[RMDB]
Source: RMDB library TTRDEL, as collected in RNAgym. The record gives the reactivity of an RNA of 177 nucleotides to 2A3 and DMS. Values cover nucleotides 27 to 126.
RNA sequence: GGGAACGACUCGAGUAGAGUCGAAAAGAUAUGGAGUGCGACGAUAAGACGGUGUCGGAAACGACACCCGUCUUUUGACGUCGCCUCCUAAGUCAAAGCGUAGGAACACUUCGGUGUUCCUACGCAAGUACGUCAUAUUCUUCGGAAUAUGACGUACAAAAGAAACAACAACAACAAC
Reactivity to 2A3 in 0.01 (KOAc 150mM, MgCl2 10mM, bicine 150mM(pH8.5), 24C), signal-to-noise 4, nucleotides 027 to 126: g020a010u060a030u090g000g010a000g000u300g030c000g000a010c000g030a090u040a300a030g010a000c010g000g000u000g000u000c000g000g010a060a030a010c000g000a000c000a020c000c010c010g010u020c000u020u020u030u050g050a020c010g000u010c000g000c000c000u000c000c000u000a020a000g020u010c040a060a120a030g000c000g010u010a000g000g000a000a000c020a000c030u070u160c300g050g000u000g000u000u000c000c010u010a000c000g000c000a000a000
Reactivity to DMS in 0.01 (KOAc 150mM, MgCl2 10mM, bicine 150mM(pH8.5), 24C), signal-to-noise 4, nucleotides 027 to 126: g010a020u000a280u000g000g010a010g010u010g030c000g010a010c000g000a110u000a040a010g010a020c010g000g020u000g010u000c010g000g000a040a060a140c010g010a020c000a010c120c120c060g010u000c000u010u000u000u010g010a220c050g010u000c000g000c000c000u010c000c000u000a010a030g000u010c020a110a090a140g010c000g000u000a000g010g000a020a010c000a010c000u000u010c170g020g010u000g000u000u000c000c000u000a000c000g020c000a000a030